RNA sequence: GGGAACGACUCGAGUAGAGUCGAAAAGAUAUGGAACUGACGUGAGUGGAUCUUGUGCAAGGAUUUCGGUCGGAAACGACCGUUAUCUGAUGACCACACGGGAUCCACUCACGUCAGUUCCUAAGUCGGAUAUAAAGAUCUUCGGAUCUUUAUAUCCAAAAGAAACAACAACAACAAC
Reactivity to DMS in 0.01 (KOAc 150mM, MgCl2 10mM, bicine 150mM(pH8.5), 24C), signal-to-noise 2, nucleotides 027 to 126: g000a070u010a300u000g010g010a040a010c000u000g010a000c000g020u000g020a010g050u020g010g020a010u000c010u000u000g020u000g000c070a160a300g000g000a040u000u000u000c010g030g030u000c000g010g020a110a090a170c010g020a000c010c000g020u000u000a000u000c010u010g010a160u020g000a140c300c300a220c010a000c080g000g000g010a010u010c000c000a000c010u000c000a010c010g000u010c000a000g000u000u000c000c000u000a010a110g020u000c110